[RMDB]
RNA sequence: GGGAACGACUCGAGUAGAGUCGAAAACGUGGCGGCCGCGUUGCCGGUACCGCGCGCCUCCUUGCCUUUGGCGUCGAAAACGGCGCGGUGCUGGUUGCGGUCCUGCUCGACAAAGUGCACCUUGCCGACCGCUCGUCCUUUUCGAAGGACGAGCGGUAAAAGAAACAACAACAACAAC
Reactivity to 2A3 in 0.01 (KOAc 150mM, MgCl2 10mM, bicine 150mM(pH8.5), 24C), signal-to-noise 2, nucleotides 027 to 126: c130g000u030g040g000c040g000g000c040c000g000c000g130u090u240g000c020c000g000g000u030a020c000c000g000c000g010c060g020c030c000u260c020c020u190u300g000c000c020u300u220u300g000g000c010g050u140c100g010a000a000a000a210c050g020g050c000g000c010g000g000u030g000c000u000g000g000u070u130g020c000g000g000u010c000c000u060g060c000u000c080g040a050c000a060a130a050g120u080g030c040a040c070c000u000u300g060c020c020g020